[RMDB]
RNA sequence: GGGAACGACUCGAGUAGAGUCGAAAAUAUACUUAUUCUCACCGCGUGCUUGUUAAAUCCAUGGUACUCUUCCGGCCUGCGUGCUGAAGCCUGGCGUGGCUACUUGGAGGUGUCGCGCAGAAAGUGAGCUGUUUGCGCGGUUCGUUGCGCAAGCAGCAAAAGAAACAACAACAACAAC
Reactivity to DMS in 0.01 (KOAc 150mM, MgCl2 10mM, bicine 150mM(pH8.5), 24C), signal-to-noise 9, nucleotides 027 to 126: u010a110u010a100c110u010u000a120u000u000c020u000c010a160c160c060g010c050g020u000g010c040u000u000g010u010u000a050a090a090u000c050c030a050u000g000g010u000a050c080u000c040u000u000c040c040g010g010c040c020u010g010c120g020u000g010c040u000g000a080a110g010c050c020u000g010g010c070g030u000g000g000c040u000a050c050u000u000g010g010a100g000g010u000g010u000c030g010c030g010c040a080g000a050a060a090g010u010g000a180
Reactivity to 2A3 in 0.01 (KOAc 150mM, MgCl2 10mM, bicine 150mM(pH8.5), 24C), signal-to-noise 8, nucleotides 027 to 126: u110a010u030a040c040u120u090a050u210u040c030u010c020a030c020c030g020c020g050u040g020c020u140u090g050u140u190a060a090a040u020c020c010a040u080g030g020u060a060c020u020c010u120u020c030c010g040g000c010c020u050g030c050g040u090g020c020u040g040a050a010g010c000c040u040g050g000c030g030u030g010g000c020u060a050c030u070u100g120g030a080g020g030u020g020u040c010g000c010g000c020a010g100a040a070a010g080u090g060a030
Description
Structure probing data (DMS and 2A3) for a 177-nucleotide construct. Source: RMDB library OK2TST, as collected in RNAgym. For DMS the reverse transcriptase was MarathonRT. The RNA was probed in 150 mM KOAc, 10 mM MgCl2 and 150 mM bicine (pH 8.5) at 24 C. In probing experiments dimethyl sulfate is read out at A N1 and C N3, which are open when not base-paired. The 2A3 profile rests on 31,911 reads.